The record gives the reactivity of an RNA of 177 nucleotides to 2A3 and DMS. For DMS the reverse transcriptase was MarathonRT. The reactions ran in a buffer of 150 mM KOAc, 10 mM MgCl2 and 150 mM bicine (pH 8.5), at 24 C. For 2A3 the reverse transcriptase was SuperScript II with manganese.
RNA sequence: GGGAACGACUCGAGUAGAGUCGAAAAGAUAUGGAUCGCUCCAGUUUCUUGGACCUAUGUUCGGAAACGAACAUAGCUAGAAACGGAGGCGAUCCUAAGUCAAAACACAAGACUUCGGUCUUGUGAAGCAUAACUAAUUCUUCGGAAUUAGUUAUGCAAAAGAAACAACAACAACAAC
Reactivity to 2A3 in 0.01 (KOAc 150mM, MgCl2 10mM, bicine 150mM(pH8.5), 24C), signal-to-noise 6, nucleotides 027 to 126: g010a010u070a030u170g000g010a000u000c010g000c010u000c020c070a150g010u010u000u010c020u090u210g100g090a090c020c020u000a000u010g000u000u010c020g030g050a100a080a090c010g000a000a000c000a000u000a010g000c000u010a010g010a000a020a010c020g000g020a060g110g040c000g000a000u000c000c000u010a040a000g010u000c030a110a050a150a070c020a000c010a010a010g020a010c000u070u270c300g090g000u000c000u000u020g000u000g010a010a010
Reactivity to DMS in 0.01 (KOAc 150mM, MgCl2 10mM, bicine 150mM(pH8.5), 24C), signal-to-noise 9, nucleotides 027 to 126: g020a030u010a300u010g000g010a010u000c000g010c000u000c010c010a170g030u000u000u000c000u000u010g030g000a130c300c010u000a000u000g000u000u000c000g010g010a120a110a200c000g010a010a010c000a010u000a010g010c030u000a010g000a000a010a010c000g000g010a050g010g020c000g000a000u000c000c000u000a010a110g000u010c030a110a110a170a250c010a010c000a000a010g000a020c000u000u010c230g020g010u000c000u000u000g010u000g000a050a140